[RMDB]
RNA sequence: GGGAACGACUCGAGUAGAGUCGAAAACGUAAAGGGCGAGCUUUUGACCGGAAUGGUUCCGCCGUGAUCGGGCCAUGCAAUAGUUGCCAACGACAACUAUGCUCCGGUUGCUCAGGCAGCGUAACGCACAAUGGAACAACCUUCGGGUUGUUCCAAAUCUAAAAAAGCUGUUCGCAGCUUUUUUAGAAAAAGAAACAACAACAACAAC
Reactivity to DMS in 0.01 (KOAc 150mM, MgCl2 10mM, bicine 150mM(pH8.5), 24C), signal-to-noise 3, nucleotides 027 to 156: c030g010u010a060a090a120g000g030g000c020g000a110g020c040u000u000u000u000g020a020c040c020g020g010a170a060u000g020g020u000u000c020c010g030c080c120g030u020g010a120u000c010g010g010g020c020c010a070u000g010c070a070a050u010a020g010u000u000g000c000c010a170a150c230g010a090c000a000a020c000u000a010u000g010c100u000c010c000g010g000u000u010g010c050u000c070a070g020g020c050a110g020c020g010u000a070a140c060g010c040a070c050a090a220u010g010g000a030a010c010a000a020c000c000u000u010c300g030g030g020u000u000g000u000u000c000c000a000a010a040
Reactivity to 2A3 in 0.01 (KOAc 150mM, MgCl2 10mM, bicine 150mM(pH8.5), 24C), signal-to-noise 4, nucleotides 027 to 156: c010g020u060a070a030a120g070g050g030c030g000a040g000c020u100u130u150u220g040a000c020c000g010g030a050a040u080g010g040u300u300c010c040g000c070c090g030u080g020a140u130c010g010g000g010c010c020a010u060g010c000a050a300u000a010g000u000u010g000c030c060a090a050c100g090a070c010a000a000c000u000a000u020g000c030u020c000c000g000g000u010u060g000c010u010c010a000g110g000c030a030g010c030g050u070a080a010c030g030c040a050c040a090a180u070g000g000a000a010c000a000a000c000c000u020u050c160g060g000g010u000u000g000u000u000c000c000a000a000a000
Description:
Chemical mapping of a 207-nucleotide RNA with DMS and 2A3. For DMS the reverse transcriptase was MarathonRT. Values cover nucleotides 27 to 156.